Description: The record gives the reactivity of an RNA of 177 nucleotides to 2A3.
[RMDB]
RNA sequence: GGGAACGACUCGAGUAGAGUCGAAAAUCAUUGAGUGCAGCGUUGAUGAAACUGAAGUAUUCCAUUUUUCAGCUUCUUUGAAGUCCGGCAAGAUGGGUUCUGGUUGAUUCCAUUGGCGCUGCACUCAUUCGCUCUAGGACUUCGGUCCUAGAGCGAAAAAAGAAACAACAACAACAAC
Reactivity to 2A3 in 0.01 (KOAc 150mM, MgCl2 10mM, bicine 150mM(pH8.5), 24C), signal-to-noise 1, nucleotides 027 to 126: u110c020a080u040u100g000a000g000u000g000c030a000g010c000g010u000u000g010a010u000g000a000a040a000c080u060g000a100a000g040u000a000u250u250c000c000a000u000u000u000u000u060c000a050g040c040u000u060c020u070u100u300g020a010a000g090u090c100c070g090g000c110a050a000g000a030u040g010g000g000u030u000c020u030g190g000u120u020g060a280u120u000c030c000a000u000u000g000g010c010g020c000u000g000c060a010c000u000c000a000

Values are in units of 0.01, from 0 to 300, in steps of 10. 2A3 adducts were read by reverse transcription with SuperScript II with manganese.